This 177-nucleotide RNA was probed chemically with DMS. The reactions ran in a buffer of 150 mM KOAc, 10 mM MgCl2 and 150 mM bicine (pH 8.5), at 24 C.
[RMDB]
RNA sequence: GGGAACGACUCGAGUAGAGUCGAAAAAAAAGAUAUGGAUCCAGGAACUACAUAAGGAGAGCCAACAGCGCUUAUCGGAAACGAUAAGCGACAUGGCUCUUCUUAUGCCUGGAUCCUAAGUCAAAAACUCUUCUAUGAACUUCGGUUCAUAGAAGAGAAAAGAAACAACAACAACAAC
Reactivity to DMS in 0.01 (KOAc 150mM, MgCl2 10mM, bicine 150mM(pH8.5), 24C), signal-to-noise 1, nucleotides 027 to 126: a070a070a060a110g000a030u000a300u000g000g000a000u000c000c000a000g000g000a140a020c030u000a300c020a000u000a000a020g000g000a000g010a020g010c000c000a040a030c260a250g000c010g020c000u000u020a000u010c000g000g000a100a050a110c000g030a000u010a030a020g030c010g000a050c090a160u000g000g020c000u000c000u010u000c000u000u010a000u000g000c000c010u000g000g000a000u000c000c000u000a000a040g010u030c030a090a060a180a100a150
DMS (dimethyl sulfate) methylates the pairing face of unpaired adenines and cytosines.